RNA sequence: GGGAACGACUCGAGUAGAGUCGAAAAGCGUACUACGCAGUCACAUGGAGACAUGCUGGACGGCCGGGGUCUUCCCAAAUAGGAAGACAAGAAUGUUUUAGCAACAGCUCCAUGAAGUCUGCGUAUCGCAAAAGCGCAUAGCUUCGGCUAUGCGCAAGACUUUUACCGUGUUCGCACGGUAAAAGUCAAAAGAAACAACAACAACAAC
Reactivity to 2A3 in 0.01 (KOAc 150mM, MgCl2 10mM, bicine 150mM(pH8.5), 24C), signal-to-noise 2, nucleotides 027 to 156: g000c030g070u140a050c040u000a010c030g000c020a000g000u000c000a000c000a100u000g010g000a030g010a030c050a070u040g010c000u000g000g000a000c010g010g010c030c040g110g080g060g010u000c000u000u000c000c060c000a190a300a010u150a060g000g000a000a000g000a020c080a130a000g090a040a030u130g030u120u180u290u300a050g000c000a020a070c040a140g060c030u020c000c000a000u010g010a110a020g060u030c000u010g000c010g000u000a000u070c020g000c000a000a000a000a100g010c000g030c000a000u000a000g000c000u060u030c220g100g000c010u020a000u020g010c020g000c000a000a010
Record summary:
Conditions: 150 mM KOAc, 10 mM MgCl2 and 150 mM bicine (pH 8.5), 24 C. An RNA of 207 nucleotides, treated with 2A3 and read out base by base. Reactivities are rounded to 0.1 and cut off at 0 and 3.